Annotation:
Conditions: 150 mM KOAc, 10 mM MgCl2 and 150 mM bicine (pH 8.5), 24 C. The record gives the reactivity of an RNA of 177 nucleotides to 2A3 and DMS. For DMS the reverse transcriptase was MarathonRT.
RNA sequence: GGGAACGACUCGAGUAGAGUCGAAAAGAUAUGGAUAGCGCAGAUAUCGAACUACUCCCACCGUUCGGAAACGAACGGGAGGAGCGAUGUAGCUAUCCUAAGUCAAACACCGCCUUCGGGCGGUGAAGAUGUAAGGAACGUUCGCGUUCCUUACAUCAAAAGAAACAACAACAACAAC
Reactivity to 2A3 in 0.01 (KOAc 150mM, MgCl2 10mM, bicine 150mM(pH8.5), 24C), signal-to-noise 5, nucleotides 027 to 126: g010a010u060a030u110g000g000a010u020a010g000c020g040c140a030g120a300u150a060u300c060g010a110a120c100u200a100c000u300c030c000c020a090c020c020g000u000u000c000g010g040a010a060a050c020g000a010a000c010g010g010g000a050g000g000a030g090c060g000a010u030g030u140a100g000c000u000a000u000c000c000u000a040a010g000u000c020a010a090a080c010a000c000c000g040c000c010u070u080c300g140g000g000c000g060g000u000g000a000a030
Reactivity to DMS in 0.01 (KOAc 150mM, MgCl2 10mM, bicine 150mM(pH8.5), 24C), signal-to-noise 5, nucleotides 027 to 126: g020a050u010a300u030g000g000a010u010a000g010c010g010c240a170g030a070u020a050u000c020g000a110a050c080u020a300c020u000c000c000c240a270c060c020g000u000u000c000g010g010a140a070a180c000g010a030a010c000g010g010g000a260g010g020a020g000c010g000a020u010g020u000a180g000c010u000a000u000c000c010u000a010a090g000u000c030a120a130a260c020a000c000c000g020c000c000u000u030c260g040g010g030c000g010g010u000g000a040a050